This 177-nucleotide RNA was probed chemically with 2A3 and DMS. For DMS, 1,494 sequencing reads were counted. The data come from the RNA Mapping Database (RMDB), library OK2TST. DMS adducts were read by reverse transcription with MarathonRT.

[RMDB]
RNA sequence: GGGAACGACUCGAGUAGAGUCGAAAAGGGUGCUCGCGUGGCUCAAUGUGGAGGUGGGGGUAGGACCGCAUGAUGCGGGAAUGUAAGACUCUGACUGGGUGUUUGCUGUGGUAUACUUCCUCGGCACACCCUGCAUGGAUUUCGAUCCAUGCAGGGUAAAAGAAACAACAACAACAAC
Reactivity to 2A3 in 0.01 (KOAc 150mM, MgCl2 10mM, bicine 150mM(pH8.5), 24C), signal-to-noise 1, nucleotides 027 to 126: g010g040g040u060g000c040u050c030g120c070g030u090g040g030c050u000c050a040a270u120g050u070g060g040a180g040g080u180g060g020g020g020g030u050a040g080g040a030c030c010g040c070a100u230g050a090u230g180c050g020g020g120a010a000u110g060u100a080a000g070a020c050u010c030u120g050a140c030u060g060g000g020u040g100u070u160u030g010c010u030g010u050g010g000u030a090u050a170c130u080u050c000c000u000c020g010g000c050a000c000
Reactivity to DMS in 0.01 (KOAc 150mM, MgCl2 10mM, bicine 150mM(pH8.5), 24C), signal-to-noise 2, nucleotides 027 to 126: g000g020g000u010g000c040u000c060g030c130g060u000g010g000c060u000c120a160a170u000g030u030g000g010a120g000g010u000g020g020g000g000g030u000a040g020g010a220c020c010g000c010a080u020g020a140u020g020c000g010g000g000a060a050u010g010u000a110a110g020a020c110u000c030u010g000a120c160u000g000g010g000u000g020u010u000u010g010c040u000g020u000g000g010u000a060u000a070c230u000u010c010c000u000c040g010g010c010a080c110
For 2A3, 752 sequencing reads were counted.